[RMDB]
RNA sequence: GGGAACGACUCGAGUAGAGUCGAAAACGGCACAAAAUACAGACAACAGUUCGGAAUUACAACGCCUGCAAGCUAGCACCACUGCUUUUACCGAUGCAGAAGCUACAAAAAUAGCGGCGGUAUUAGCGACUAAAACCCAGCUGGAAACUUUAUGGCAAUUUCUAAGCACAUUCGUGUGCUUAGAAAUAAAAGAAACAACAACAACAAC
Reactivity to DMS in 0.01 (KOAc 150mM, MgCl2 10mM, bicine 150mM(pH8.5), 24C), signal-to-noise 1, nucleotides 027 to 156: c010g030g070c110a130c060a070a170a080a130u000a120c030a100g010a110c000a030a040c000a110g030u000u000c070g000g000a140a110u000u030a110c010a100a180c070g030c300c040u010g030c170a080a100g000c000u000a060g180c010a080c040c180a100c010u210g070c010u030u000u000u000a140c100c030g000a110u010g050c010a080g030a070a110g000c060u000a210c030a040a040a020a080a270u000a100g000c030g060g000c030g000g070u000a030u000u000a030g000c040g000a100c140u000a030a040a170a050c040c000c000a130g050c000u000g010g050a100a080a040c000u000u000u010a060u000g030g000c010a060
Reactivity to 2A3 in 0.01 (KOAc 150mM, MgCl2 10mM, bicine 150mM(pH8.5), 24C), signal-to-noise 2, nucleotides 027 to 156: c050g040g000c110a010c010a040a100a070a030u240a050c040a020g140a040c050a100a010c020a050g010u080u060c030g040g040a060a040u110u090a080c050a100a020c140g000c000c000u060g010c110a000a060g000c040u040a020g110c010a030c060c000a080c070u080g010c000u030u050u020u040a060c050c040g040a040u100g090c080a020g040a190a010g010c000u010a020c040a040a150a090a050a060u080a040g020c030g060g000c000g000g000u000a020u010u030a000g020c010g030a050c010u100a090a000a040a000c000c000c000a000g000c020u040g010g000a060a090a090c070u130u130u100a140u170g070g000c000a000